[RMDB]
Structure probing data (2A3 and DMS) for a 207-nucleotide construct. The RNA was probed in 150 mM KOAc, 10 mM MgCl2 and 150 mM bicine (pH 8.5) at 24 C. For 2A3 the reverse transcriptase was SuperScript II with manganese. It was measured as part of the RMDB library OK3TST.
RNA sequence: GGGAACGACUCGAGUAGAGUCGAAAAUAGUCAACACUCUCAUCGUUAUCAGGGUAGAACCAGAACACACGUUGGUUGAUCUUGUCAUACUCAACAGUAACCUGAGCCUUCUUGGCGUUUGAGAUGUUGUUCCACAAAGUCUGGAUAGUACUGAGUGUCAUAGACAUGUAUUCGUACAUGUCUAUGAAAAAGAAACAACAACAACAAC
Reactivity to 2A3 in 0.01 (KOAc 150mM, MgCl2 10mM, bicine 150mM(pH8.5), 24C), signal-to-noise 9, nucleotides 027 to 156: u150a010g140u050c020a020a010c010a010c040u000c000u000c000a030u010c030g050u050u100a100u140c060a030g030g010g030u100a050g090a110a050c020c010a020g060a130a020c060a010c020a010c140g030u030u030g030g020u020u020g040a050u050c080u090u140g040u050c020a040u060a160c030u050c110a030a050c010a070g030u050a030a030c000c010u020g050a030g040c000c030u140u130c070u090u150g020g000c010g050u030u050u040g020a020g000a020u020g010u010u000g010u040u020c030c000a070c020a060a060a010g040u010c030u050g110g070a120u130a140g050u090a070c040u050g020a020g070u080g030
Reactivity to DMS in 0.01 (KOAc 150mM, MgCl2 10mM, bicine 150mM(pH8.5), 24C), signal-to-noise 8, nucleotides 027 to 156: u010a090g010u010c020a020a040c020a040c070u000c000u010c020a040u010c050g030u000u000a060u010c040a110g010g020g020u010a090g000a100a130c070c030a090g020a090a110c100a110c090a080c110g020u010u000g020g020u000u000g000a090u000c080u000u010g010u000c040a100u010a060c030u000c020a040a050c040a140g020u000a070a070c040c010u000g010a140g020c020c010u000u000c040u000u000g020g010c020g020u000u000u010g010a050g010a070u000g010u000u000g010u000u000c020c010a090c070a070a130a130g020u000c030u000g010g010a130u000a080g020u000a080c060u000g000a270g020u010g010